Chemical mapping of a 177-nucleotide RNA with 2A3 and DMS.
RNA sequence: GGGAACGACUCGAGUAGAGUCGAAAAGGCAAAAACAUCCGUGAUGGAACUGACAAUUGGCAUGGCAUCUGAGGAACUUGGCUGUGGUUCCGACAGCUCAUCUCCGGACUUUCGGUGCGGUCGCUAAAUACGCCGUGCAGUUCGCUGCACGGCGUAUAAAAGAAACAACAACAACAAC
Reactivity to 2A3 in 0.01 (KOAc 150mM, MgCl2 10mM, bicine 150mM(pH8.5), 24C), signal-to-noise 2, nucleotides 027 to 126: g050g020c110a080a030a000a000a100c080a100u060c040c060g060u050g020a070u280g000g130a040a000c010u060g040a130c020a010a030u140u110g000g000c000a000u100g050g000c000a010u040c040u040g020a060g000g000a090a220c050u100u070g100g000c010u020g020u060g120g000u090u080c000c000g030a020c000a000g020c020u040c050a090u060c010u000c000c010g080g140a130c010u070u160u000c090g000g010u060g070c000g050g000u060c030g000c020u100a130a090
Reactivity to DMS in 0.01 (KOAc 150mM, MgCl2 10mM, bicine 150mM(pH8.5), 24C), signal-to-noise 1, nucleotides 027 to 126: g110g000c160a000a000a050a010a160c070a120u070c030c010g010u020g000a100u000g000g000a140a070c170u000g010a120c090a110a060u000u000g000g000c060a110u010g020g000c070a000u000c020u000g030a260g000g010a000a060c090u000u010g000g000c060u000g020u000g000g000u000u000c000c000g050a040c040a040g000c050u070c070a020u000c050u080c020c000g000g000a070c090u010u000u020c130g060g040u000g000c000g000g030u050c060g000c040u010a000a060

Values cover nucleotides 27 to 126.